[RMDB]
RNA sequence: GGGAACGACUCGAGUAGAGUCGAAAAGGGCUGAACAAGUCCGCCAUGACUUGCUGGUUUGGACUGUGAGAGUGGUGGUUGGGUGUCUCAAGUAUCCUCUGGGGGUGUCCGUGUCCGUUCCGGGGGACCUGGUUUCCCUAUUCGUAGGGAAACCAGGAAAAGAAACAACAACAACAAC
Reactivity to 2A3 in 0.01 (KOAc 150mM, MgCl2 10mM, bicine 150mM(pH8.5), 24C), signal-to-noise 2, nucleotides 027 to 126: g050g020g050c000u030g030a040a000c030a120a030g000u010c000c000g010c000c000a090u220g100a280c080u090u180g060c000u000g000g080u150u200u200g030g000a010c010u050g000u060g050a020g020a000g060u100g000g020u010g000g000u090u000g000g030g010u010g000u020c000u000c020a010a010g040u040a030u040c000c000u010c020u010g000g000g000g070g000u020g050u050c050c030g030u080g080u080c050c030g050u050u090c030c000g000g000g000g000g000a000
Reactivity to DMS in 0.01 (KOAc 150mM, MgCl2 10mM, bicine 150mM(pH8.5), 24C), signal-to-noise 1, nucleotides 027 to 126: g000g000g020c040u000g000a120a140c080a120a080g040u000c030c020g000c010c030a070u020g000a200c060u010u000g010c050u000g000g010u000u000u050g030g000a030c010u040g020u000g010a060g000a220g000u000g000g000u000g010g030u000u020g010g000g020u000g000u040c020u000c050a060a120g020u020a070u010c000c000u010c060u020g010g010g000g000g020u030g020u000c000c030g020u000g000u000c020c050g080u030u000c020c030g010g000g000g010g010a160